Structure probing data (DMS and 2A3) for a 177-nucleotide construct.

[RMDB]
RNA sequence: GGGAACGACUCGAGUAGAGUCGAAAAGGAUUAUGAACGUAGCAAUAUUUAUGGUACUGCUACUAUUGGUGUAUGUAAGUACACUGAUAUUGAUGUUAAUUCAGCUUUGAAUAUAUGUUUUGACAUACGCUGUUGUAUUGUUCGCAAUACAACAGCGAAAAGAAACAACAACAACAAC
Reactivity to DMS in 0.01 (KOAc 150mM, MgCl2 10mM, bicine 150mM(pH8.5), 24C), signal-to-noise 2, nucleotides 027 to 126: g010g010a090u000u000a030u010g020a140a100c170g020u010a010g010c000a020a040u000a010u000u000u030a110u010g000g010u000a010c050u000g000c000u000a000c000u000a010u000u010g000g020u000g020u000a010u010g000u020a110a150g010u010a010c000a010c020u000g010a000u000a060u010u010g010a100u000g010u020u000a030a030u000u000c020a120g000c160u000u010u010g020a040a090u010a110u010a050u000g000u000u000u000u020g010a080c120a040u000a110
Reactivity to 2A3 in 0.01 (KOAc 150mM, MgCl2 10mM, bicine 150mM(pH8.5), 24C), signal-to-noise 2, nucleotides 027 to 126: g060g010a060u060u050a040u270g070a110a000c040g020u010a000g000c000a010a020u010a010u060u170u080a150u300g100g020u000a010c010u010g000c010u000a010c000u000a020u000u030g030g010u010g000u000a020u050g060u040a070a090g000u000a000c010a000c000u000g000a010u030a010u020u120g080a070u070g040u040u020a020a020u100u000c000a020g070c120u110u150u250g110a110a000u130a000u010a010u120g070u000u060u020u060g070a000c020a030u080a060